[RMDB]
The data come from the RNA Mapping Database (RMDB), library VIROID. An RNA of 207 nucleotides, treated with 2A3 and read out base by base. For 2A3 the reverse transcriptase was SuperScript II with manganese. The reactions ran in a buffer of 150 mM KOAc, 10 mM MgCl2 and 150 mM bicine (pH 8.5), at 24 C.

RNA sequence: GGGAACGACUCGAGUAGAGUCGAAAAUAGAGAAGUGGGUCGAAGUGGGGCGUAAAGCAAGGACGGUCCAAGGGCGAGUCGACCUCUCCAUCGGCACGAGGACGUGCCUGGUUUUGAGUGGGGGAGGAUGUUACGGACAAAUUCCGUAACCGUGUGACCAAUUCAAUGCGUUCGCGCAUUGAAUUGGAAAAGAAACAACAACAACAAC
Reactivity to 2A3 in 0.01 (KOAc 150mM, MgCl2 10mM, bicine 150mM(pH8.5), 24C), signal-to-noise 2, nucleotides 027 to 156: u130a000g040a000g000a070a020g050u120g000g020g000u050c090g010a090a040g070u070g030g030g010g000c050g020u080a090a030a030g060c060a010a060g050g020a040c090g050g040u000c000c060a040a040g000g000g020c030g000a030g020u040c010g000a060c000c020u020c010u010c010c010a100u060c010g000g010c010a000c000g070a060g140g120a080c030g010u000g000c000c010u060g010g000u020u030u160u090g080a040g060u050g000g000g000g000g000a010g000g010a000u060g000u000u000a000c010g020g000a000c090a130a290a070u240u000c000c000g010u000a000a000c000c020g040u080g020u060g110a040